RNA sequence: GGGAACGACUCGAGUAGAGUCGAAAAAGGCUAUUAACGUAGAAUGUGAAGACCCGCGACUCAACUGCAGGCUUGCAGCCGAUACGAGCAAGCUGUAAGAGCAUAAUUGAGAAUGCACAGCGGACGCAAAUUAUAAUAUAUUCGUAUAUUAUAAUUUAAAAGAAACAACAACAACAAC
Reactivity to 2A3 in 0.01 (KOAc 150mM, MgCl2 10mM, bicine 150mM(pH8.5), 24C), signal-to-noise 2, nucleotides 027 to 126: a020g100g000c060u070a090u170u120a170a030c030g000u010a050g050a300a100u180g060u080g090a040a000g030a070c000c000c000g010c000g040a030c000u000c010a040a000c020u010g000c000a050g220g200c000u010u020g000c000a010g020c000c050g120a130u120a220c080g000a070g050c050a010a000g000c030u040g000u010a080a000g000a010g030c010a030u050a090a010u110u050g000a020g020a160a020u090g010c070a010c000a030g010c000g000g020a010c030g000c070
Reactivity to DMS in 0.01 (KOAc 150mM, MgCl2 10mM, bicine 150mM(pH8.5), 24C), signal-to-noise 3, nucleotides 027 to 126: a090g000g020c010u010a030u020u020a090a110c130g010u020a050g000a020a100u020g000u020g000a120a110g000a120c080c020c020g030c010g000a170c020u000c040a010a030c080u000g020c030a150g000g010c000u020u000g000c000a050g020c050c060g010a140u020a030c160g000a140g000c090a220a100g000c000u010g000u000a040a010g010a070g020c030a020u020a080a160u010u010g000a040g010a120a040u000g000c070a070c200a050g010c050g000g010a070c080g030c110
The record gives the reactivity of an RNA of 177 nucleotides to 2A3 and DMS. Reactivities are given for positions 27 through 126. DMS adducts were read by reverse transcription with MarathonRT. For DMS, 3,014 sequencing reads were counted. The reactions ran in a buffer of 150 mM KOAc, 10 mM MgCl2 and 150 mM bicine (pH 8.5), at 24 C.